[RMDB]
RNA sequence: GGGAACGACUCGAGUAGAGUCGAAAAGUGGAAAACGUACGUUUUAUAUCACAGCAAAUGGCGGUAUUUCAUUCUGUCGUAGGCAUAAUUGGAAUUGUGUGGAUUGUGACACUGCAGGUGUGGGGAACAAGUGAACUGGGUUCGCCCAGUUCACUUGAAAAGAAACAACAACAACAAC
Reactivity to DMS in 0.01 (KOAc 150mM, MgCl2 10mM, bicine 150mM(pH8.5), 24C), signal-to-noise 1, nucleotides 027 to 126: g030u000g010g000a040a010a050a050c080g000u020a050c160g030u000u000u000u000a180u020a200u020c060a050c130a100g010c150a010a080a060u020g000g000c050g000g000u010a020u000u010u020c100a040u000u000c000u000g000u000c000g050u010a070g010g000c030a030u000a030a050u010u010g010g000a050a090u000u000g010u000g000u000g020g000a090u000u000g060u000g000a120c080a020c060u010g000c100a010g010g010u000g020u000g000g000g030g010a140a160